RNA sequence: GGGAACGACUCGAGUAGAGUCGAAAAUCGCCAACAACGUGUACGCGGAUCGUAUGGGUAAUGGCUGUGAGCAGGAUGGUGACGGUUGGAAGUAUCGCGGGCGCGGCCUGAUCCAGCUGACCGGGAAUAACGCAUACACAUUCGUGUGUAUGCGUUAAAAAGAAACAACAACAACAAC
Reactivity to 2A3 in 0.01 (KOAc 150mM, MgCl2 10mM, bicine 150mM(pH8.5), 24C), signal-to-noise 1, nucleotides 027 to 126: u050c000g070c020c010a040a000c020a000a060c080g110u050g050u110a020c060g060c030g070g060a110u080c020g030u080a070u090g100g000g010u110a140a100u150g070g000c010u000g080u080g050a050g040c030a030g060g030a090u100g040g010u050g000a000c040g000g020u040u010g060g030a110a040g090u110a050u090c090g000c030g080g070g000c060g000c000g060g000c000c010u010g010a000u000c010c000a000g000c010u030g010a020c000c000g000g050g000a030a060
Reactivity to DMS in 0.01 (KOAc 150mM, MgCl2 10mM, bicine 150mM(pH8.5), 24C), signal-to-noise 4, nucleotides 027 to 126: u010c070g010c010c010a110a090c110a120a070c050g010u000g010u010a030c050g020c080g000g000a090u000c060g010u010a060u010g010g010g010u010a090a080u000g010g020c030u000g020u010g010a090g020c040a040g000g010a080u000g010g000u000g000a120c090g000g010u010u000g000g000a100a090g010u000a050u000c090g010c040g010g010g000c070g010c050g020g010c040c020u000g000a090u000c020c010a050g020c020u000g010a080c030c010g000g010g000a130a140
An RNA of 177 nucleotides, treated with 2A3 and DMS and read out base by base. Conditions: 150 mM KOAc, 10 mM MgCl2 and 150 mM bicine (pH 8.5), 24 C. The DMS profile rests on 5,318 reads. For 2A3, 2,528 sequencing reads were counted. The data come from the RNA Mapping Database (RMDB), library OK2TST.